[RMDB]
RNA sequence: GGGAACGACUCGAGUAGAGUCGAAAAGCCCUCCGCUUCGGCGGAGGGCAAACAACUUACCGCCCUCUCAAAAAGAAGUUGAAAGAGAGGGCGCUUUGCGAAAAAGCAAAAGCUUCGGCUUUUGCAAGAUUUAGUAAAGCUUCGGCUUUACUAAAUCAAAAGAAACAACAACAACAAC
Reactivity to DMS in 0.01 (KOAc 150mM, MgCl2 10mM, bicine 150mM(pH8.5), 24C), signal-to-noise 1, nucleotides 027 to 126: g030c000c000c010u020c000c000g020c000u000u000c170g010g030c020g000g000a030g010g030g040c020a010a060a040c030a070a100c140u000u000a050c300c030g020c000c000c010u000c000u000c000a040a040a160a050a080g020a130a120g000u030u040g000a070a040a230g000a010g040a040g020g010g010c020g020c040u000u000u020g020c040g000a040a050a090a170a190g000c000a010a000a010a000g000c000u000u030c170g000g000c000u010u010u010u010g010c000a050a060